[RMDB]
RNA sequence: GGGAACGACUCGAGUAGAGUCGAAAAAAUACUUUUGUUACUUAUGCACCGAAUUCGACUAUUUCGCAUUCAUUAGUGAUAGACGUGAAUCAACAAAUCCAAGGGGUGUAGAUAGUUUAUAAUUUAUCAUCGAGGUUUAAUUCGUUAAACCUCGAUGAAAAGAAACAACAACAACAAC
Reactivity to DMS in 0.01 (KOAc 150mM, MgCl2 10mM, bicine 150mM(pH8.5), 24C), signal-to-noise 1, nucleotides 027 to 126: a050a050u040a070c000u000u020u010u000g020u000u000a020c010u000u040a010u020g000c080a030c150c020g000a050a200u020u020c080g000a070c090u000a060u080u040u010c120g000c060a040u000u020c000a070u000u030a120g000u030g050a010u000a090g000a100c070g000u000g010a030a100u000c170a070a150c160a060a110a030u040c000c030a010a140g000g000g000g070u000g010u010a000g000a010u000a040g010u000u000u020a070u070a110a050u000u010u000a060u010
Reactivity to 2A3 in 0.01 (KOAc 150mM, MgCl2 10mM, bicine 150mM(pH8.5), 24C), signal-to-noise 2, nucleotides 027 to 126: a000a000u260a040c050u180u060u010u110g090u080u010a050c000u030u040a000u100g020c000a020c010c020g030a020a010u070u070c000g010a000c040u070a080u080u080u050c060g030c020a040u050u100c010a060u120u130a090g020u050g180a010u050a060g080a010c070g010u000g110a020a000u100c010a010a060c040a070a010a040u050c010c070a020a020g110g000g000g010u000g000u060a010g010a050u080a000g010u000u120u000a070u040a020a170u080u080u090a220u040